[RMDB]
RNA sequence: GGGAACGACUCGAGUAGAGUCGAAAAGACGGAAAAGAUCGAACCUAAGAAGAUUAGGAAGUGUGAGCCGAAUCCUAGGGCUCCUAGGGACGCAUCGUCCGAUGCGAAAUAAACACCAACGUCGAAACCCAUAGGCAUAUUUCGAUAUGCCUAUGGGAAAAGAAACAACAACAACAAC
Reactivity to DMS in 0.01 (KOAc 150mM, MgCl2 10mM, bicine 150mM(pH8.5), 24C), signal-to-noise 5, nucleotides 027 to 126: g020a070c030g000g000a060a050a050a100g000a060u020c050g000a110a110c020c010u000a020a030g010a130a070g020a190u010u000a030g000g000a070a100g000u010g010u010g000a060g000c030c050g020a120a090u000c050c030u020a060g010g010g000c090u020c020c040u000a050g000g000g000a250c010g000c020a010u010c000g010u060c190c140g020a040u000g000c010g010a070a010a090u030a070a080a040c110a100c030c050a070a100c060g000u020c010g000a110a110a140
Reactivity to 2A3 in 0.01 (KOAc 150mM, MgCl2 10mM, bicine 150mM(pH8.5), 24C), signal-to-noise 8, nucleotides 027 to 126: g010a000c020g060g050a080a070a020a020g100a040u150c100g030a060a100c000c010u010a020a020g070a060a030g030a130u030u030a000g010g040a070a080g080u060g020u070g070a020g030c030c020g050a060a050u060c010c020u060a060g040g010g060c040u070c030c000u040a040g010g020g030a010c000g000c010a010u010c030g220u130c110c180g000a000u010g010c010g060a030a060a090u150a020a080a010c050a020c050c020a060a050c040g020u030c020g020a050a040a040